[RMDB]
RNA sequence: GGGAACGACUCGAGUAGAGUCGAAAAGCGUACUACGAACUUAGUACAUGGAGGGAGCUCGUUAACACUCGUGUCCCAAAUAGGACACGAGGGAAAGACGAGCGAGGAUCUCCAUGGAACAGUUCGUAUCGCAAACCUCCCUCUUCGGAGGGAGGAAUCAAACGUAAUUCUUCGGAAUUACGUUUGAAAAAGAAACAACAACAACAAC
Reactivity to DMS in 0.01 (KOAc 150mM, MgCl2 10mM, bicine 150mM(pH8.5), 24C), signal-to-noise 1, nucleotides 027 to 156: g000c030g030u000a060c150u000a000c010g000a060a000c000u000u000a180g010u010a200c000a010u000g000g020a050g010g020g000a110g030c010u020c020g000u000u000a050a300c050a140c010u010c000g020u000g030u000c000c000c020a040a110a280u020a060g000g010a020c020a000c000g010a010g020g000g000a040a180a300g090a000c020g000a000g020c010g000a010g060g010a100u020c000u020c000c010a000u000g000g000a170a230c300a010g000u000u000c010g080u000a000u020c040g080c020a020a060a130c010c010u020c000c000c000u000c040u020u010c270g060g000a040g000g000g020a000g000g000a000a000
Reactivity to 2A3 in 0.01 (KOAc 150mM, MgCl2 10mM, bicine 150mM(pH8.5), 24C), signal-to-noise 2, nucleotides 027 to 156: g000c010g060u140a080c050u010a000c040g010a000a000c000u000u020a010g000u000a010c000a000u010g020g010a010g000g010g000a000g000c000u010c000g020u060u110a130a030c060a050c050u000c000g010u010g000u030c000c010c000a250a300a210u300a060g000g010a000c000a000c000g000a000g000g000g040a050a080a000g070a000c000g000a000g000c000g000a000g000g000a000u010c000u000c000c020a000u000g010g000a020a010c010a000g000u000u020c000g000u000a000u000c010g000c000a030a020a080c000c000u000c000c010c000u000c030u030u070c210g130g010a000g020g000g000a000g000g000a000a040
Structure probing data (DMS and 2A3) for a 207-nucleotide construct. For DMS, 2,068 sequencing reads were counted. 2A3 adducts were read by reverse transcription with SuperScript II with manganese. The reactions ran in a buffer of 150 mM KOAc, 10 mM MgCl2 and 150 mM bicine (pH 8.5), at 24 C.